An RNA of 177 nucleotides, treated with DMS and 2A3 and read out base by base. For DMS the reverse transcriptase was MarathonRT.

RNA sequence: GGGAACGACUCGAGUAGAGUCGAAAAAAAAAGGCACUUCAGGUGGCUCUGGGGCGAAAGUACUGACGACAGACCAGAAGCGGGUAGCCGUUGAGUUUAUGUGUGAUGCGACCGGUCUGUCGAAAAACAUCGAUUAUAACUUCGGUUAUAAUCGAUGAAAAGAAACAACAACAACAAC
Reactivity to DMS in 0.01 (KOAc 150mM, MgCl2 10mM, bicine 150mM(pH8.5), 24C), signal-to-noise 4, nucleotides 027 to 126: a040a040a010a090a050g010g010c020a030c040u000u000c070a060g020g020u000g000g010c060u000c050u010g010g010g010g010c150g010a080a030a040g010u000a100c070u000g020a180c020g010a020c010a010g020a040c010c000a090g000a060a170g000c030g020g010g010u000a160g000c020c010g000u000u010g000a120g020u000u010u010a030u020g010u000g020u000g010a130u010g000c030g010a260c040c050g010g000u000c000u000g000u010c010g000a010a010a050a100a080
Reactivity to 2A3 in 0.01 (KOAc 150mM, MgCl2 10mM, bicine 150mM(pH8.5), 24C), signal-to-noise 3, nucleotides 027 to 126: a000a000a000a010a070g040g000c020a010c020u070u030c030a030g040g000u020g000g050c020u010c030u040g000g000g030g000c040g020a040a020a010g030u050a050c040u070g070a010c020g000a000c000a000g010a010c000c000a010g010a070a000g010c020g040g100g010u030a010g010c010c010g030u010u060g140a200g100u120u200u100a070u050g180u010g010u020g030a090u070g020c010g000a020c010c010g010g020u000c000u000g000u000c000g000a020a010a000a000a000
The RNA was probed in 150 mM KOAc, 10 mM MgCl2 and 150 mM bicine (pH 8.5) at 24 C.
For 2A3, 4,927 sequencing reads were counted.
Source: RMDB library M2PK90, as collected in RNAgym.
For 2A3 the reverse transcriptase was SuperScript II with manganese.
Reactivities are given for positions 27 through 126.